[RMDB]
RNA sequence: GGGAACGACUCGAGUAGAGUCGAAAAUGAGAAGUCGUCAGUAGUUCGACGUGAGCAGAAGCCCGCCUCGAUAUGCUAUGUGGACGAGGGCAUGCCCAAGACAGACCUUAACCCUAGCGGGACGCAAUGUUCUCCACUGUUUCGACAGUGGAGAACAAAAAGAAACAACAACAACAAC
Reactivity to DMS in 0.01 (KOAc 150mM, MgCl2 10mM, bicine 150mM(pH8.5), 24C), signal-to-noise 1, nucleotides 027 to 126: u020g030a090g010a030a060g020u000c010g010u000c050a130g010u000a050g010u000u000c040g040a020c120g000u000g010a070g000c020a070g040a140a150g010c050c020c030g040c050c040u000c060g010a050u020a040u010g020c050u000a030u000g000u000g020g040a020c070g020a100g020g000g000c080a070u000g050c030c000c070a120a070g010a100c090a060g000a090c070c010u000u020a100a130c030c000c000u000a090g010c150g000g030g000a130c100g000c140a090a120